[RMDB]
RNA sequence: GGGAACGACUCGAGUAGAGUCGAAAAUACGCUCUAGGACACUCGCUCUAGGAUCGUGUGCUCUGUGCUGAUCAGUACCAUGCUAGGUACGUACACUCGUACCUAGAUCUAGGUGUGACUGGAUCCACAAACAAGGCGAGUUCGCUCGCCUUGUUUGAAAAGAAACAACAACAACAAC
Reactivity to DMS in 0.01 (KOAc 150mM, MgCl2 10mM, bicine 150mM(pH8.5), 24C), signal-to-noise 2, nucleotides 027 to 126: u000a030c080g010c070u000c030u000a050g020g000a060c020a080c100u010c050g000c080u000c030u000a100g010g000a050u000c040g000u000g000u000g040c030u020c030u000g020u010g010c070u000g010a070u000c020a020g000u000a060c040c010a140u010g000c020u000a020g000g020u000a000c030g010u000a060c300a140c180u010c000g000u000a010c000c010u000a000g000a020u010c080u010a130g000g010u000g030u000g010a040c020u000g030g000a100u010c020c030a120
Reactivity to 2A3 in 0.01 (KOAc 150mM, MgCl2 10mM, bicine 150mM(pH8.5), 24C), signal-to-noise 1, nucleotides 027 to 126: u060a010c060g020c040u000c030u110a040g060g040a010c010a010c040u040c090g030c020u060c050u120a120g050g120a080u020c030g010u030g010u020g020c050u010c000u030g050u010g000c020u070g010a070u050c000a010g010u020a040c030c010a010u090g030c010u010a000g000g040u000a000c000g040u090a070c090a040c220u090c000g000u020a020c000c000u000a010g000a010u000c000u060a180g090g010u000g030u030g000a020c000u000g080g000a020u000c000c040a030